This 177-nucleotide RNA was probed chemically with 2A3 and DMS. The data come from the RNA Mapping Database (RMDB), library OK2TST.
RNA sequence: GGGAACGACUCGAGUAGAGUCGAAAAGAGGGAUGACUUUCGAACCCAACCCUAAACCAAUGCAUAGGGGAACGGCGGCGUGCGUAAUAACGGUUGGCAUGAUGGUCGCUUCGGCAAAAUGUCGAUGCAGGACAAGUGCAUUCGUGCACUUGUCCUGAAAAGAAACAACAACAACAAC
Reactivity to 2A3 in 0.01 (KOAc 150mM, MgCl2 10mM, bicine 150mM(pH8.5), 24C), signal-to-noise 1, nucleotides 027 to 126: g140a080g000g050g030a050u080g040a090c010u180u230u130c020g030a050a030c000c000c000a010a010c010c020c000u070a140a050a060c040c040a100a060u120g040c010a080u100a090g000g000g020g000a080a060c030g010g000c000g010g000c000g010u060g010c020g040u130a060a080u130a120a070c060g020g000u040u040g000g000c050a040u120g000a040u020g080g010u050c010g000c070u090u020c000g000g070c010a030a040a140a190u070g000u030c000g040a050u110g040
Reactivity to DMS in 0.01 (KOAc 150mM, MgCl2 10mM, bicine 150mM(pH8.5), 24C), signal-to-noise 1, nucleotides 027 to 126: g030a040g000g000g020a180u000g010a080c000u000u000u000c050g000a090a130c190c000c000a120a170c010c000c000u000a050a090a150c080c090a050a100u000g010c050a060u010a110g000g000g000g000a060a050c080g000g020c020g000g000c030g020u000g010c080g010u000a040a090u020a040a090c160g010g000u000u000g000g000c080a020u010g010a060u030g000g010u010c080g000c040u000u000c020g040g020c050a070a050a080a040u000g040u000c020g000a060u000g010

DMS adducts were read by reverse transcription with MarathonRT.